[RMDB]
RNA sequence: GGGAACGACUCGAGUAGAGUCGAAAAGACGUCCGGAUGGUGGUAGACGCCGAGAUAGCGCCCCAGGUCGUGCCAGUGCACGAUCAGCAGGUUCUCGCGCUGCCCUGUGGCACGCUCACUCGUCACCAUCGGAAUAAGGCUUCGGCCUUAUUCCGAUAAAAGAAACAACAACAACAAC
Reactivity to DMS in 0.01 (KOAc 150mM, MgCl2 10mM, bicine 150mM(pH8.5), 24C), signal-to-noise 2, nucleotides 027 to 126: g010a090c140g030u010c020c010g000g000a120u000g010g020u010g000g020u000a100g000a040c070g040c300c080g030a040g010a070u010a110g020c040g030c050c040c040c050a090g000g000u010c000g030u000g010c010c280a110g000u010g020c020a010c000g000a010u000c120a100g020c080a100g020g020u000u000c100u010c100g030c040g030c080u000g030c070c020c020u010g000u010g000g000c020a060c060g010c010u000c040a110c110u000c010g010u010c030a070c030c000
Reactivity to 2A3 in 0.01 (KOAc 150mM, MgCl2 10mM, bicine 150mM(pH8.5), 24C), signal-to-noise 1, nucleotides 027 to 126: g080a020c020g060u040c020c020g090g030a080u110g000g050u080g000g000u060a110g090a160c090g080c130c060g000a000g020a020u090a050g120c010g020c010c010c050c050a010g030g040u000c030g000u010g050c050c070a280g050u220g240c000a000c030g000a020u040c030a000g030c000a020g040g000u130u040c050u050c040g100c040g010c050u000g000c000c000c000u040g010u050g030g010c050a000c060g060c000u000c010a020c010u020c000g000u000c000a020c040c020